[RMDB]
RNA sequence: GGGAACGACUCGAGUAGAGUCGAAAAGAUAUGGAUGACCUAUGAACUACGCAGUGGCUCGGAAACGAGCCAUACUGCGCAUAGGCAAUGUCCUAAGUCAAAACACUCACUCUUCGGAGUGAGUGAAGUGGUAAAGACUGUUCGCAGUCUUUACCACAAAAGAAACAACAACAACAAC
Reactivity to 2A3 in 0.01 (KOAc 150mM, MgCl2 10mM, bicine 150mM(pH8.5), 24C), signal-to-noise 2, nucleotides 027 to 126: g000a000u030a000u110g020g000a010u060g300a240c010c000u010a010u010g060a140a170c120u160a080c300g000c000a000g000u010g010g000c000u010c030g000g040a010a020a020c020g000a000g000c020c000a000u030a000c000u000g000c030g000c010a000u000a000g020g000c010a050a240u300g000u020c000c000u030a030a000g000u010c030a000a000a000a220c000a000c000u000c000a000c010u010c010u050u080c300g180g010a010g010u000g030a000g000u000g000a000a010
Reactivity to DMS in 0.01 (KOAc 150mM, MgCl2 10mM, bicine 150mM(pH8.5), 24C), signal-to-noise 2, nucleotides 027 to 126: g010a010u000a060u010g000g000a030u000g020a120c010c000u000a000u000g010a070a080c110u020a300c030g020c010a000g010u000g000g010c000u000c010g000g010a010a000a050c010g040a010g010c010c000a000u000a000c040u000g010c030g030c010a010u000a000g010g010c110a160a040u000g010u000c000c000u000a000a170g000u000c010a120a050a090a200c010a020c000u000c000a010c000u000c000u010u000c160g030g010a010g000u010g000a010g000u000g010a010a060